Chemical mapping of a 177-nucleotide RNA with 2A3 and DMS. The RNA was probed in 150 mM KOAc, 10 mM MgCl2 and 150 mM bicine (pH 8.5) at 24 C.

RNA sequence: GGGAACGACUCGAGUAGAGUCGAAAAAAGUAAACAAAUUAAAAGCGCAAUCCGGAGGUGAGAUUUACAACACCAUUUUCAGCGGACGACACAUGAAGGAACUUGAUGCGCUUCAUGAUGUGCUGAGGCAUGUGACGUAAUUCGUUACGUCACAUGCAAAAGAAACAACAACAACAAC
Reactivity to 2A3 in 0.01 (KOAc 150mM, MgCl2 10mM, bicine 150mM(pH8.5), 24C), signal-to-noise 2, nucleotides 027 to 126: a020a000g230u290a160a180a010c090a020a050a040u260u240a220a300a030a000g030c040g020c080a050a000u040c010c000g000g020a100g070g000u070g050a180g020a100u100u190u170a030c040a080a030c000a000c040c010a040u140u030u010u090c010a000g010c040g050g050a010c070g020a010c020a000c000a040u020g010a010a010g020g010a060a020c020u080u120g080a090u150g090c140g050c000u000u000c000a020u020g080a130u020g000u020g050c030u060g010a050g010
Reactivity to DMS in 0.01 (KOAc 150mM, MgCl2 10mM, bicine 150mM(pH8.5), 24C), signal-to-noise 2, nucleotides 027 to 126: a100a070g010u010a120a070a100c080a090a110a060u020u010a110a090a080a120g010c070g000c030a140a060u010c020c020g000g010a150g010g020u010g000a100g000a100u030u000u020a130c120a080a080c060a090c020c010a140u020u010u010u000c060a070g000c010g020g030a160c250g010a100c070a040c010a030u000g000a040a020g000g020a070a030c110u000u010g000a100u000g010c080g030c000u010u000c020a010u000g010a130u000g050u000g030c020u020g000a050g000